[RMDB]
RNA sequence: GGGAACGACUCGAGUAGAGUCGAAAAGGGGUCGAUCACCGAGAUCCUGAAAGGCUUGGAUUUACAGGCUGAAGCCUCCACGGCCUGUUGUCAGCCUAUAAGGGAUCGUUUGACGUGAUCGACGGAGGCACCCAAAAGCCACGGUUCGCCGUGGCAAGCUUAAUCCCUCGUUCGCGAGGGAUUAAGCAAAAGAAACAACAACAACAAC
Reactivity to 2A3 in 0.01 (KOAc 150mM, MgCl2 10mM, bicine 150mM(pH8.5), 24C), signal-to-noise 2, nucleotides 027 to 156: g060g010g060g000u000c010g000a000u010c000a000c010c000g020a030g010a000u000c020c030u050g070a180a050a020g050g000c100u290u300g180g000a060u230u130u120a010c020a000g020g000c000u030g050a070a010g010c000c000u000c020c000a010c010g000g000c000c000u000g020u000u010g010u040c100a030g000c020c000u050a080u060a050a060g010g000g000a000u010c010g010u120u200u140g000a010c000g000u000g000a000u000c000g010a000c000g000g000a000g000g010c010a060c000c010c000a000a100a030a030g000c010c010a000c020g010g040u060u130c220g010c090c000g020u010g000g020c000a000a000